[RMDB]
RNA sequence: GGGAACGACUCGAGUAGAGUCGAAAAAGCAAGAGAAAACUGGCUCUCCCUUAGCCAUCCGAGUGGACGUCUGUCCUCCUUCGGAUGCCCAGGUCGGACCGCGAGGAGGUGGAGAUGCCAUGCCGACGUACGCGCAGGUUCGCCUGCGCGAAAAGAAACAACAACAACAAC
Reactivity to DMS in 0.01 (KOAc 150mM, MgCl2 10mM, bicine 150mM(pH8.5), 24C), signal-to-noise 4, nucleotides 027 to 129: a040g070c170a060a030g010a120g030a070a030a080a150c090u010g050g000c030u000c020u020c030c030c080u060u080a070g030c110c010a030u010c010c030g000a030g000u020g000g000a060c030g070u000c150u100g000u000c000c030u080c080c110u030u010c030g010g000a020u020g010c080c080c030a100g000g040u050c030g040g000a220c060c040g030c130g030a120g010g010a080g000g060u040g040g200a050g000a030u080g000c040c060a030u030g030c040c000g030a000c050g040u160a060
Reactivity to 2A3 in 0.01 (KOAc 150mM, MgCl2 10mM, bicine 150mM(pH8.5), 24C), signal-to-noise 5, nucleotides 027 to 129: a000g110c070a050a010g060a000g070a070a070a030a050c050u000g010g000c000u000c000u020c030c010c000u030u070a030g030c010c000a010u000c000c020g000a030g020u040g010g010a020c020g160u110c200u300g030u000c040c020u020c000c080u090u020c000g010g000a000u010g000c000c000c000a060g000g050u070c040g000g000a000c000c000g040c040g030a060g010g010a030g000g040u090g030g010a050g000a020u160g010c010c010a030u040g000c000c010g050a090c020g070u150a050